[RMDB]
RNA sequence: GGGAACGACUCGAGUAGAGUCGAAAACUUAACGCGUUCGCGCGUUAAGAAACAACAUAAACAUCGAGUUGACGAUGACACAAUUACCGUCAGUGUAGACGGAAAGCAUUCGCUUCGGCGAAUGCAAGACAGAUACUGGCUUCGGCCAGUAUCUGUCAAAAGAAACAACAACAACAAC
Reactivity to 2A3 in 0.01 (KOAc 150mM, MgCl2 10mM, bicine 150mM(pH8.5), 24C), signal-to-noise 1, nucleotides 027 to 126: c000u010u000a000a010c000g010c020g040u030u100c210g020c000g000c000g070u000u010a000a000g020a020a080a000c030a020a000c010a070u180a120a170a000c000a050u000c000g000a050g110u080u140g190a090c060g000a030u060g010a020c000a010c010a150a120u110u130a070c030c000g010u020c010a100g090u030g160u300a010g010a010c000g000g000a090a000a000g000c000a000u010u000c000g010c000u040u080c120g080g000c000g010a000a000u000g000c010a010a020
Reactivity to DMS in 0.01 (KOAc 150mM, MgCl2 10mM, bicine 150mM(pH8.5), 24C), signal-to-noise 1, nucleotides 027 to 126: c010u000u000a000a010c000g010c000g000u000u010c250g000c000g050c000g030u010u000a000a000g000a170a090a070c180a050a020c050a080u030a040a110a140c020a040u000c010g000a170g000u000u010g010a110c000g030a000u000g000a130c240a060c140a030a000u020u010a080c020c000g000u000c000a050g010u030g030u010a110g000a000c000g010g000a000a070a090g000c000a010u000u000c000g010c000u000u010c300g010g050c010g010a000a000u000g000c020a000a010

The record gives the reactivity of an RNA of 177 nucleotides to 2A3 and DMS. The reactions ran in a buffer of 150 mM KOAc, 10 mM MgCl2 and 150 mM bicine (pH 8.5), at 24 C. DMS adducts were read by reverse transcription with MarathonRT. Values are in units of 0.01, from 0 to 300, in steps of 10. For 2A3 the reverse transcriptase was SuperScript II with manganese.